Structure probing data (DMS and 2A3) for a 177-nucleotide construct.
RNA sequence: GGGAACGACUCGAGUAGAGUCGAAAAAGUAACGUAAUAAAUGCGUUUAGUCAUCUGUGGCAGACCCGAAGCCACUCGAUCUAUACCUGAGCAGGUUGAAGUUUAGCGAAAGCUAGAUGGAGGACCGCCAUUAUAGAUCUUUCGAGAUCUAUAAUGGAAAAGAAACAACAACAACAAC
Reactivity to DMS in 0.01 (KOAc 150mM, MgCl2 10mM, bicine 150mM(pH8.5), 24C), signal-to-noise 9, nucleotides 027 to 126: a110g010u020a020a020c010g000u010a060a160u020a090a120a130u010g000c010g000u000u000u010a060g020u030c110a060u010c090u020g010u000g010g010c000a080g010a130c040c030c030g010a180a130g000c010c010a010c010u000c180g010a030u010c040u010a080u010a080c050c030u010g010a130g020c090a080g000g000u000u000g010a270a170g000u000u000u000a010g010c000g000a110a070a150g000c000u000a010g000a020u000g010g000a230g010g000a020c010c020g010
Reactivity to 2A3 in 0.01 (KOAc 150mM, MgCl2 10mM, bicine 150mM(pH8.5), 24C), signal-to-noise 9, nucleotides 027 to 126: a000g160u100a010a010c030g010u030a030a090u090a180a280a070u190g010c010g000u020u040u090a120g040u080c050a050u010c100u070g020u010g010g000c020a020g060a200c010c010c040g040a050a000g000c000c000a010c010u020c060g010a030u000c030u080a100u060a160c010c050u070g070a040g050c080a070g050g000u020u030g020a020a010g000u010u010u010a010g000c010g040a110a020a000g000c000u010a010g000a010u030g010g020a020g030g120a000c000c010g000